[RMDB]
RNA sequence: GGGAACGACUCGAGUAGAGUCGAAAAUACUCAACUUACUUGUGCACAUUCUUGUUGAAAUCAUUGAAGGAGGCGUACAUGACCAGCGUUCCGAAGCAGAUGGCCAGCGAGAAGAACAUCUGUGUGAGUCACGAAAAUACUUCGGUAUUUUCGUGACAAAAGAAACAACAACAACAAC
Reactivity to 2A3 in 0.01 (KOAc 150mM, MgCl2 10mM, bicine 150mM(pH8.5), 24C), signal-to-noise 4, nucleotides 027 to 126: u130a000c010u020c030a050a030c050u170u120a020c010u110u120g040u010g030c030a030c000a170u050u070c040u080u110g090u040u050g030a080a110a090u160c050a110u020u190g060a050a030g080g040a050g050g000c040g000u020a030c020a090u060g110a080c020c040a020g020c000g070u080u000c000c000g010a070a000g000c020a000g010a070u060g030g010c050c000a050g090c070g050a080g050a110a050g030a050a000c000a030u030c040u030g030u070g030u080g110a030
Reactivity to DMS in 0.01 (KOAc 150mM, MgCl2 10mM, bicine 150mM(pH8.5), 24C), signal-to-noise 3, nucleotides 027 to 126: u040a120c030u000c030a160a050c040u000u000a300c030u000u010g010u000g000c070a090c140a110u000u000c010u000u030g000u010u010g010a080a150a100u020c080a090u020u050g010a050a080g000g000a040g000g000c010g010u000a010c070a040u000g000a080c070c040a020g010c020g020u000u000c010c000g000a110a190g010c070a070g010a040u030g020g000c220c030a050g080c080g010a140g010a080a110g020a030a060c030a010u030c030u000g000u000g030u020g000a180
Conditions: 150 mM KOAc, 10 mM MgCl2 and 150 mM bicine (pH 8.5), 24 C. This 177-nucleotide RNA was probed chemically with 2A3 and DMS. The DMS profile rests on 3,081 reads. It was measured as part of the RMDB library OK1LIB.